An RNA of 207 nucleotides, treated with 2A3 and DMS and read out base by base. For DMS the reverse transcriptase was MarathonRT. It was measured as part of the RMDB library OK3TST. For 2A3, 1,721 sequencing reads were counted.

RNA sequence: GGGAACGACUCGAGUAGAGUCGAAAAUAUCGACAAAAAGAUUAACCAUAGAGCCAUCUCUUAACGAUAAAAGAAUAGGAGCUGCUGCAACCGUCGUAAAUGGACGCAUUUAUGUUAUCGGUGGACGAGAUGGAUCAAAUUAUCUAAACACUGUAGAUGAAUAACCGUGUUUCGACACGGUUAUUCAAAAAGAAACAACAACAACAAC
Reactivity to 2A3 in 0.01 (KOAc 150mM, MgCl2 10mM, bicine 150mM(pH8.5), 24C), signal-to-noise 3, nucleotides 027 to 156: u100a010u020c030g030a020c060a020a090a020a020a020g020a030u080u090a070a040c010c020a060u070a080g070a020g010c010c010a020u000c030u020c010u100u120a080a020c040g010a030u060a070a080a010a020g120a100a050u080a100g050g020a060g040c030u100g000c060u040g010c070a060a050c020c010g020u020c000g000u000a010a030a020u050g020g030a050c070g030c120a000u000u050u030a020u060g060u020u070a030u030c040g030g050u030g020g080a010c040g000a010g000a010u010g000g000a000u020c000a000a010a000u100u070a040u020c040u040a020a070a030c050a030c080u120g090u150a040g050a170
Reactivity to DMS in 0.01 (KOAc 150mM, MgCl2 10mM, bicine 150mM(pH8.5), 24C), signal-to-noise 1, nucleotides 027 to 156: u000a090u000c030g000a120c040a060a070a110a240a130g010a170u010u000a040a130c020c020a120u010a090g010a020g010c010c010a030u020c040u000c030u000u000a060a110c130g020a080u010a070a090a070a090g000a110a160u000a130g050g010a290g000c000u000g030c060u010g020c030a040a100c040c020g030u000c070g000u000a020a080a090u000g020g000a110c070g000c050a100u000u010u000a050u010g010u000u000a010u000c010g030g000u000g050g020a170c190g030a060g010a060u000g000g000a030u000c040a070a070a100u000u000a110u010c080u010a060a030a140c050a070c070u000g000u000a120g000a180